[RMDB]
RNA sequence: GGGAACGACUCGAGUAGAGUCGAAAACUCAACAUUCCGAGGACGUUUCCCAGCCAGGGGUUGUCAUCCUCAAGUUUCUUGAGCUUCUUGUUGGUUCGCCGGAGAUCCUUCUCGAGAAUUCGCCUUUAUACGCGAUACUUCGGUAUCGCGAAAAGAAACAACAACAACAAC
Reactivity to DMS in 0.01 (KOAc 150mM, MgCl2 10mM, bicine 150mM(pH8.5), 24C), signal-to-noise 2, nucleotides 027 to 129: c050u000c040a190a100c150a130u020u020c170c060g010a020g050g000a220c070g080u000u000u000c000c000c060a240g010c100c100a030g040g000g030g050u090u000g040u010c000a140u010c090c000u050c070a060a130g010u010u000u070c040u020u090g040a090g010c090u060u000c080u000u030g050u000u000g030g010u020u060c000g060c030c010g000g020a100g020a000u000c080c010u020u030c030u020c000g010a160g000a150a090u000u080c050g060c060c000u010u060u030a040u050a000
Reactivity to 2A3 in 0.01 (KOAc 150mM, MgCl2 10mM, bicine 150mM(pH8.5), 24C), signal-to-noise 3, nucleotides 027 to 129: c000u000c010a000a000c060a150u150u070c080c030g020a010g000g060a150c000g020u000u090u050c010c000c000a000g030c050c030a000g060g000g000g000u040u110g060u040c040a110u060c030c000u010c040a000a000g020u020u090u040c010u000u080g030a050g030c000u050u050c030u050u140g090u070u030g030g040u010u010c090g020c020c000g000g000a090g020a010u000c000c020u050u040c070u020c040g010a000g010a010a060u130u030c040g110c010c000u150u130u010a130u080a060